[RMDB]
RNA sequence: GGGAACGACUCGAGUAGAGUCGAAAAGACACGACGGAGACGUCGUGUCAAAGAGUGGGAAACCACUCAAAGAGCCACAGCUUCGGCUGUGGCUCAAGGCGCGGCUUUGUCCGCGGAACAAACGUAAUCGAGUAAUAUUAUUCGUAAUAUUACUCGAAAAAGAAACAACAACAACAAC
Reactivity to 2A3 in 0.01 (KOAc 150mM, MgCl2 10mM, bicine 150mM(pH8.5), 24C), signal-to-noise 4, nucleotides 027 to 126: g010a000c000a000c000g010a000c000g050g000a050g020a060c010g000u010c000g000u000g000u000c000a000a000a000g000a000g000u000g000g000g010a040a060a080c000c000a000c000u010c000a030a050a000g000a000g010c000c010a010c020a010g060c000u140u190c300g110g010c010u010g000u010g020g040c020u000c010a000a000g000g010c020g000c000g020g000c060u270u220u300g050u080c000c000g000c000g010g020a040a010c060a050a070a010c040g190u150a020a110
Reactivity to DMS in 0.01 (KOAc 150mM, MgCl2 10mM, bicine 150mM(pH8.5), 24C), signal-to-noise 4, nucleotides 027 to 126: g000a010c000a010c000g000a010c010g000g010a280g000a240c010g020u000c010g030u000g000u000c000a020a050a110g010a020g010u000g010g000g000a170a110a230c000c000a010c000u000c000a030a070a090g000a030g010c000c000a020c000a030g020c010u000u010c290g020g020c000u020g050u010g000g010c000u010c000a010a060g020g000c020g020c000g000g010c010u010u000u010g010u010c000c000g010c000g000g000a060a110c170a050a060a090c170g000u010a100a160